[RMDB]
RNA sequence: GGGAACGACUCGAGUAGAGUCGAAAACGCGGGCGGUCGCGUCGCGCUGAUCGCAGAGUUCACCGCCGCGCGAGCGAUGCAGUUCAGUGUCUCUGGGCCAGGGUAAAGCGCGACAUGGAUCUUCGUCAAAUCCUCAUGGGUUCGCCCAUGAGGAUUUAAAAGAAACAACAACAACAAC
Reactivity to 2A3 in 0.01 (KOAc 150mM, MgCl2 10mM, bicine 150mM(pH8.5), 24C), signal-to-noise 2, nucleotides 027 to 126: c080g000c010g000g000g010c050g030g000u120c080g030c040g000u000c000g000c000g000c020u030g000a030u150c030g000c040a000g000a040g060u120u160c010a000c030c010g020c000c020g110c000g020c010g000a030g020c020g040a050u100g020c000a030g030u120u190c040a090g020u050g100u110c040u000c000u050g000g080g010c060c010a100g030g000g000u150a170a170a000g000c030g000c000g000a000c000a040u030g080g000a030u030c000u060u070c080g090u070c090
Reactivity to DMS in 0.01 (KOAc 150mM, MgCl2 10mM, bicine 150mM(pH8.5), 24C), signal-to-noise 2, nucleotides 027 to 126: c090g000c020g000g000g000c030g030g020u000c020g100c120g020u000c040g000c040g010c030u010g040a040u010c010g020c030a060g000a140g000u000u010c020a010c020c000g000c010c020g050c010g000c140g030a140g040c000g010a050u040g000c080a090g020u000u090c150a080g010u030g030u020c030u000c050u000g000g020g040c000c090a150g000g020g020u010a070a020a070g030c010g020c040g000a000c010a140u010g010g000a100u000c060u000u000c010g000u010c190
The record gives the reactivity of an RNA of 177 nucleotides to 2A3 and DMS. It was measured as part of the RMDB library OK1LIB. Reactivities are given for positions 27 through 126. The DMS profile rests on 2,251 reads. 2A3 adducts were read by reverse transcription with SuperScript II with manganese.